[RMDB]
Structure probing data (2A3 and DMS) for a 177-nucleotide construct. For DMS the reverse transcriptase was MarathonRT. For 2A3, 6,721 sequencing reads were counted. It was measured as part of the RMDB library OK2TST. The DMS profile rests on 12,096 reads. High 2A3 reactivity points to a flexible backbone, as in loops and unpaired stretches.
RNA sequence: GGGAACGACUCGAGUAGAGUCGAAAACUCCAGGUUUGAUGAAGGGUUUAUAGCGCUAACAUUUUAGGAUGAAAUACAGCUGGUUUCAGAUUCCACUGUCAACUCAGAAUCAAGCUAAUUUCAUGUGUCCCUAACUAAAUUUCGAUUUAGUUAGGGAAAAAGAAACAACAACAACAAC
Reactivity to 2A3 in 0.01 (KOAc 150mM, MgCl2 10mM, bicine 150mM(pH8.5), 24C), signal-to-noise 6, nucleotides 027 to 126: c020u030c000c010a030g040g020u020u010u010g010a010u010g000a030a040g040g000g000u030u050u020a060u040a020g070c060g040c130u070a110a050c060a160u120u130u060u120a060g050g020a020u040g040a030a050a050u160a090c050a030g100c110u120g030g040u060u060u130c040a050g030a170u130u040c010c000a030c020u020g020u040c010a000a000c010u000c010a000g050a030a020u010c010a020a000g000c010u050a100a160u020u100u090c100a090u110g090u050g060
Reactivity to DMS in 0.01 (KOAc 150mM, MgCl2 10mM, bicine 150mM(pH8.5), 24C), signal-to-noise 9, nucleotides 027 to 126: c080u010c020c070a180g010g020u000u010u000g010a020u000g000a300a160g010g000g010u000u000u010a040u000a040g010c080g010c080u000a040a120c130a090u000u000u000u000a090g000g010a120u000g000a030a030a050u000a110c130a120g020c100u010g000g010u000u000u000c080a070g000a160u000u000c100c040a090c030u000g010u000c070a020a030c030u000c030a050g010a300a020u010c010a020a020g010c020u010a070a090u000u010u010c100a070u010g010u010g000